[RMDB]
RNA sequence: GGGAACGACUCGAGUAGAGUCGAAAACACAAUCAGCACUACUUGAUCCUCGAGCUUAUCUGAAGUGAGCAAGAGUGUGCUUGAUGGCUUGAUCCAUCUGUUAACUUGUCCAUGAGUCCAUCAGGUGAAUACGGUGGUGAUUCGUCACCACCGUAUUAAAAGAAACAACAACAACAAC
Reactivity to 2A3 in 0.01 (KOAc 150mM, MgCl2 10mM, bicine 150mM(pH8.5), 24C), signal-to-noise 7, nucleotides 027 to 126: c080a000c030a020a100u120c040a020g010c010a000c010u300a080c020u080u030g010a030u060c000c030u040c040g030a030g050c110u200u200a170u200c060u190g100a060a040g080u080g240a010g000c000a000a020g020a000g030u060g020u040g030c010u030u070g000a010u000g030g030c040u050u130g030a050u100c030c010a020u030c020u020g130u100u080a130a110c030u080u090g070u070c060c020a080u160g020a000g020u030c040c010a040u050c020a010g000g040u030g040
Reactivity to DMS in 0.01 (KOAc 150mM, MgCl2 10mM, bicine 150mM(pH8.5), 24C), signal-to-noise 4, nucleotides 027 to 126: c120a090c170a070a010u000c060a080g020c020a040c020u010a120c000u010u020g020a100u010c050c000u000c040g020a140g010c110u020u010a100u000c060u060g020a120a110g000u050g000a020g000c040a030a050g020a090g010u010g020u010g030c010u030u020g020a020u000g020g020c060u010u020g000a060u020c050c020a010u000c020u030g010u010u030a080a110c060u000u000g000u030c070c110a050u020g020a050g020u010c040c020a040u000c010a030g020g030u020g020